[RMDB]
RNA sequence: GGGAACGACUCGAGUAGAGUCGAAAAACGAUGUCGUUCGCGACAUCGUAAAUUGUAUAACCUUGCUUCAAGUCUACUUGGUUGUAAAGCGAGACAAGUCAGUGAGAGUCCUAUUCGUAGGACUCAACAAUGCAGGUUUAUUCGUAAACCUGCAUUGAAAAGAAACAACAACAACAAC
Reactivity to 2A3 in 0.01 (KOAc 150mM, MgCl2 10mM, bicine 150mM(pH8.5), 24C), signal-to-noise 7, nucleotides 027 to 126: a000c000g000a000u000g000u000c010g010u040u050c150g010c010g080a000c000a000u000c000g000u000a010a010a010u090u060g070u020a110u030a140a070c010c000u000u040g020c010u090u130c050a100a070g030u010c020u040a100c030u140u120g110g030u100u080g100u180a070a020a000g020c040g030a010g000a040c020a070a050g060u090c070a040g040u050g200a150g000a000g050u000c000c000u020a030u010u060c190g030u040a000g000g000a000c000u000c000a000a000
Reactivity to DMS in 0.01 (KOAc 150mM, MgCl2 10mM, bicine 150mM(pH8.5), 24C), signal-to-noise 9, nucleotides 027 to 126: a040c000g010a010u000g000u000c000g020u000u010c190g020c000g010a020c000a010u000c000g010u000a010a040a070u000u010g010u010a080u010a100a130c100c020u000u000g010c030u000u000c070a050a120g010u010c070u000a070c040u000u000g000g010u010u000g010u010a050a030a040g010c070g010a070g010a050c070a050a090g010u010c110a090g010u010g000a150g000a020g010u000c000c000u000a020u000u010c150g020u000a010g000g000a020c000u000c000a040a100